[RMDB]
Chemical mapping of a 177-nucleotide RNA with 2A3. The RNA was probed in 150 mM KOAc, 10 mM MgCl2 and 150 mM bicine (pH 8.5) at 24 C.

RNA sequence: GGGAACGACUCGAGUAGAGUCGAAAAAGAAACGAGUUUCAGAGUAUCAGCGUUUUGCAGUUAUGGCAGAAACCACAGAUAACGUCUUCACCUUGGAUGCAGAUUUUUAAAAAACCUCUCGUUUUAAGUGUUGGUGGUGGUUCGCCACCACCAACACAAAAGAAACAACAACAACAAC
Reactivity to 2A3 in 0.01 (KOAc 150mM, MgCl2 10mM, bicine 150mM(pH8.5), 24C), signal-to-noise 1, nucleotides 027 to 126: a000g050a000a000a000c000g000a000g000u090u100u000c000a030g090a120g060u040a010u100c050a070g120c000g050u000u000u060u300g030c050a050g040u080u200a240u290g130g000c050a030g070a000a020a000c000c000a000c000a010g000a010u010a130a000c100g000u000c000u060u100c000a150c000c000u050u050g040g000a000u030g000c000a030g110a200u000u030u010u250u290a160a160a000a000a000a000c000c000u030c000u110c030g020u000u000u080u190a150a060